[RMDB]
RNA sequence: GGGAACGACUCGAGUAGAGUCGAAAAUGUCACUUGAGUUUAUUAUGGAGCAUCAAUUGUAAAGAUAGCUCAAAUGCCAUGAUUCUCCUAAGGUUGCAGCCCAAAUGGGUGCAAAUAGAAUUUGCCAGAUUAUGUAUGCGUUCGCGCAUACAUAAUCAAAAGAAACAACAACAACAAC
Reactivity to 2A3 in 0.01 (KOAc 150mM, MgCl2 10mM, bicine 150mM(pH8.5), 24C), signal-to-noise 3, nucleotides 027 to 126: u030g000u010c010a010c010u000u000g010a020g040u240u230u050a040u040u040a110u180g160g070a100g040c020a010u060c060a120a300u150u050g040u100a010a050a060g030a020u020a000g000c010u000c000a010a030a010u010g000c020c000a000u030g010a040u060u000c050u000c000c020u060a150a040g120g020u020u010g010c050a160g170c010c000c040a090a300a120u290g000g000g000u050g000c010a010a000a030u110a050g140a090a130u070u050u210g110c040c030a000
Reactivity to DMS in 0.01 (KOAc 150mM, MgCl2 10mM, bicine 150mM(pH8.5), 24C), signal-to-noise 5, nucleotides 027 to 126: u000g010u010c010a030c070u000u000g010a020g010u000u010u010a020u010u010a100u000g020g020a300g020c030a040u010c220a080a160u000u010g010u010a070a130a200g010a030u000a000g000c010u000c010a010a010a010u000g020c030c000a020u000g010a210u000u000c140u010c020c090u010a060a070g020g020u010u000g010c030a050g020c020c000c020a080a080a090u020g000g000g020u000g000c010a010a010a050u000a060g010a040a300u000u010u000g020c080c080a170
This 177-nucleotide RNA was probed chemically with 2A3 and DMS. Reactivities are given for positions 27 through 126. 2A3 adducts were read by reverse transcription with SuperScript II with manganese. The RNA was probed in 150 mM KOAc, 10 mM MgCl2 and 150 mM bicine (pH 8.5) at 24 C. The data come from the RNA Mapping Database (RMDB), library OK2TRN.